[RMDB]
RNA sequence: GGGAACGACUCGAGUAGAGUCGAAAACGUGAGGAGCACACAACCUAGAUCCUUCGCAUGCGCAGUUCACAAUUGGGUGCAUGUUCCUACGAGAAUCUAAUGCUGCAGUUGAUCUGACAGGCGGUGCCCCAUCACCUCGAUUCGUCGAGGUGAUGGGAAAAGAAACAACAACAACAAC
Reactivity to DMS in 0.01 (KOAc 150mM, MgCl2 10mM, bicine 150mM(pH8.5), 24C), signal-to-noise 2, nucleotides 027 to 126: c170g010u020g000a070g000g000a050g060c050a200c060a070c090a090a150c060c020u000a130g010a050u010c070c020u020u000c050g000c000a070u000g010c000g030c060a100g000u000u050c130a090c130a060a040u020u020g000g000g000u000g000c050a000u010g000u010u020c020c000u020a150c070g010a080g010a020a000u000c060u000a050a010u040g030c000u030g000c060a050g000u010u020g000a040u000c090u000g000a070c030a010g030g000c080g000g000u000g050c040
Reactivity to 2A3 in 0.01 (KOAc 150mM, MgCl2 10mM, bicine 150mM(pH8.5), 24C), signal-to-noise 6, nucleotides 027 to 126: c060g060u070g040a090g020g050a050g050c030a030c000a010c030a090a080c000c010u040a080g010a150u040c010c000u070u080c060g010c020a030u080g000c020g000c020a080g020u140u110c040a030c040a200a160u140u140g130g040g020u050g000c030a030u040g030u010u010c010c010u100a090c110g080a090g050a230a010u060c070u090a100a010u100g010c010u040g010c020a030g000u060u080g070a160u090c070u090g040a060c010a020g010g040c010g030g010u030g020c000
An RNA of 177 nucleotides, treated with DMS and 2A3 and read out base by base.
The 2A3 profile rests on 4,193 reads.
As a SHAPE reagent, 2A3 marks flexible, mostly unpaired nucleotides at the ribose 2'-OH.